[RMDB]
RNA sequence: GGGAACGACUCGAGUAGAGUCGAAAAGUGGGUUGCAAAGCAGUGCAGGGCAUACCGAGGACUAGUCACCUCGUAAAUCCACUGGAACAAGUUAUAGUCGCAAACGACGAAACUUACGCUCUAGCCGCUUAAUCCCGGCUGGACGCUGCACCGGAGGCGCUUUAUUGGAGUUCGCUCCAAUAAAGCGAAAAGAAACAACAACAACAAC
Reactivity to DMS in 0.01 (KOAc 150mM, MgCl2 10mM, bicine 150mM(pH8.5), 24C), signal-to-noise 2, nucleotides 027 to 156: g010u010g000g040g040u000u000g030c050a040a090a130g070c070a030g000u000g020c010a070g020g020g030c070a130u000a060c260c000g000a090g010g010a190c070u000a150g010u000c110a130c020c010u010c040g040u000a050a050a090u000c010c040a040c030u010g010g010a050a070c050a050a030g020u000u000a080u000a130g010u000c020g030c080a110a110a190c040g000a010c000g000a090a100a020c000u000u000a110c110g030c050u000c000u000a020g000c010c040g000c060u000u000a110a120u000c100c040c010g020g000c000u000g010g010a050c050g010c010u000g030c010a060c010c020g040g010a190g040g010
Reactivity to 2A3 in 0.01 (KOAc 150mM, MgCl2 10mM, bicine 150mM(pH8.5), 24C), signal-to-noise 4, nucleotides 027 to 156: g020u030g010g040g000u060u050g040c080a050a080a060g020c020a050g010u020g020c020a020g010g040g020c010a050u050a080c060c000g000a010g000g020a040c050u090a060g090u130c030a070c050c010u010c000g030u050a040a030a010u000c020c030a070c080u020g010g030a050a030c040a090a020g000u030u030a170u060a230g010u000c040g060c220a130a100a140c060g020a000c000g010a040a000a000c030u040u040a020c040g000c010u000c000u000a000g010c000c010g000c010u040u080a050a010u060c000c000c000g000g000c000u000g000g010a000c020g000c010u030g000c010a040c040c020g050g020a040g050g040